[RMDB]
About this RNA
Chemical mapping of a 207-nucleotide RNA with 2A3 and DMS. 2A3 is a SHAPE reagent: it acylates the 2'-hydroxyl of flexible nucleotides of all four kinds. Reactivities are given for positions 27 through 156. The RNA was probed in 150 mM KOAc, 10 mM MgCl2 and 150 mM bicine (pH 8.5) at 24 C.

RNA sequence: GGGAACGACUCGAGUAGAGUCGAAAAAAUGCCGCCUCAGUUCCAAGCUCUUUCGUGGCACUGUAAACAGUCCUAUUGAGUUAGGGGCAGUCAUCCACGUUGCGAAGCUAAAUUAUCUGGUCGAGAGUUACGAUUCCCUACUUCGGUAGGGAAUCAAGUACCGAAGUAGGUUCGCCUACUUCGGUACAAAAGAAACAACAACAACAAC
Reactivity to 2A3 in 0.01 (KOAc 150mM, MgCl2 10mM, bicine 150mM(pH8.5), 24C), signal-to-noise 2, nucleotides 027 to 156: a000a020u090g020c010c020g010c000c010u050c030a100g060u120u030c020c010a050a020g040c010u000c000u040u030u010c030g020u020g020g000c060a010c060u010g060u120a000a180a060c020a080g100u080c000c000u070a110u030u100g130a140g160u090u120a060g000g000g040g030c000a010g020u040c030a070u070c020c000a000c030g010u000u000g030c180g090a030a030g010c020u070a040a100a100u240u180a110u110c050u020g050g040u030c030g040a020g000a020g240u100u080a030c060g000a040u000u000c000c000c010u020a010c000u060u020c200g120g000u000a000g000g000g000a010a000u000c000a020a000
Reactivity to DMS in 0.01 (KOAc 150mM, MgCl2 10mM, bicine 150mM(pH8.5), 24C), signal-to-noise 1, nucleotides 027 to 156: a080a140u000g000c000c050g030c030c020u010c010a010g020u000u000c010c010a160a300g040c060u000c020u000u000u000c030g030u000g060g000c300a090c000u030g030u000a040a090a080c020a160g000u000c000c000u000a040u010u000g020a260g010u000u010a040g030g020g010g030c000a040g010u000c090a130u000c060c020a040c080g020u030u000g020c040g000a140a110g020c060u010a070a070a080u010u000a130u000c040u000g020g030u000c080g010a070g030a110g010u010u000a130c060g000a030u000u000c000c000c000u000a010c010u000u040c230g040g000u010a010g050g010g000a010a010u000c020a010a110